[RMDB]
An RNA of 177 nucleotides, treated with DMS and read out base by base.
For DMS the reverse transcriptase was MarathonRT.
RNA sequence: GGGAACGACUCGAGUAGAGUCGAAAAAAUAAGCACCUCUCAGCCCCUCCACCUUGGGGUGCCCUAUUCGGAGCACUGCAGUUCCGAUAGAAAGGCUAAGCACGUCGCAAUGACGUAAGGUGGGACUCAAAGAUGUGAAGUUCGCUUCACAUCUUUGAAAAGAAACAACAACAACAAC
Reactivity to DMS in 0.01 (KOAc 150mM, MgCl2 10mM, bicine 150mM(pH8.5), 24C), signal-to-noise 1, nucleotides 027 to 126: a040a090u010a090a050g000c100a060c050c000u000c050u010c070a210g010c000c020c000c000u000c030c000a030c010c000u000u000g000g010g020g000u000g010c020c000c010u000a160u000u000c030g000g040a000g040c000a050c160u020g040c180a220g000u000u000c000c000g000a000u000a000g000a060a120a090g010g020c020u070a030a110g020c220a070c000g010u000c020g050c240a170a010u000g040a000c020g010u000a010a020g020g020u000g000g000g000a140c220u010
It was measured as part of the RMDB library VIROID. The reactions ran in a buffer of 150 mM KOAc, 10 mM MgCl2 and 150 mM bicine (pH 8.5), at 24 C.